Record summary: An RNA of 177 nucleotides, treated with 2A3 and read out base by base. For 2A3 the reverse transcriptase was SuperScript II with manganese. The data come from the RNA Mapping Database (RMDB), library RFM100.
[RMDB]
RNA sequence: GGGAACGACUCGAGUAGAGUCGAAAAUCAUCACGUUUAACUAGUAAUAGUGACCUUUGAAUAACUCUGUGUUUUCAUUAAAUCGUAGUGUUCAUUUACUUUGUCACUAAUUUCGCAUAACAUAUAUGCCACUCUUAAUCUUCGGAUUAAGAGUGGCAAAAGAAACAACAACAACAAC
Reactivity to 2A3 in 0.01 (KOAc 150mM, MgCl2 10mM, bicine 150mM(pH8.5), 24C), signal-to-noise 2, nucleotides 027 to 126: u140c000a000u110c080a150c230g000u030u140u140a230a090c120u050a000g040u270a150a180u000a020g000u050g000a020c040c070u020u010u000g000a010a020u050a050a000c000u000c000u020g100u000g030u170u000u040u130c110a070u000u300a050a040a000u150c060g030u080a000g000u010g000u000u000c020a020u000u000u100a010c010u120u180u300g000u000c000a000c000u000a040a140u000u170u170c150g040c040a110u120a170a030c000a000u140a040u000a000u080
The reactions ran in a buffer of 150 mM KOAc, 10 mM MgCl2 and 150 mM bicine (pH 8.5), at 24 C.